[RMDB]
Structure probing data (2A3) for a 207-nucleotide construct. The RNA was probed in 150 mM KOAc, 10 mM MgCl2 and 150 mM bicine (pH 8.5) at 24 C.
RNA sequence: GGGAACGACUCGAGUAGAGUCGAAAACGCUGGGAAUCUCCCGGAAACCAACAGCGUCUGAAGCGCGCACGGACGACAUGGUUUCGGAGAGUUCCUGUGCUGAAGCGCGCACGGCAACCGAAAGGUGCGAAAACUUCACAUAGUUCGCUAUGUGAAGCACGUAGCCACUGUUCGCAGUGGCUACGUGAAAAGAAACAACAACAACAAC
Reactivity to 2A3 in 0.01 (KOAc 150mM, MgCl2 10mM, bicine 150mM(pH8.5), 24C), signal-to-noise 3, nucleotides 027 to 156: c020g020c010u050g020g000g020a040a130u050c000u010c050c030c050g140g100a060a040a000c010c030a060a120c070a200g040c010g030u000c010u040g120a260a060g000c020g000c000g000c020a010c010g010g010a000c010g000a020c090a290u300g000g000u020u020u020c020g000g020a130g000a000g040u180u280c000c020u010g010u020g000c010u060g030a130a050g000c010g000c000g000c020a010c000g010g010c020a020a000c020c000g010a110a020a010g040g000u040g010c010g030a040a040a040a060c010u000u010c000a000c010a010u020a010g030u050u050c190g030c130u000a000u000g010u000g000a000a000g000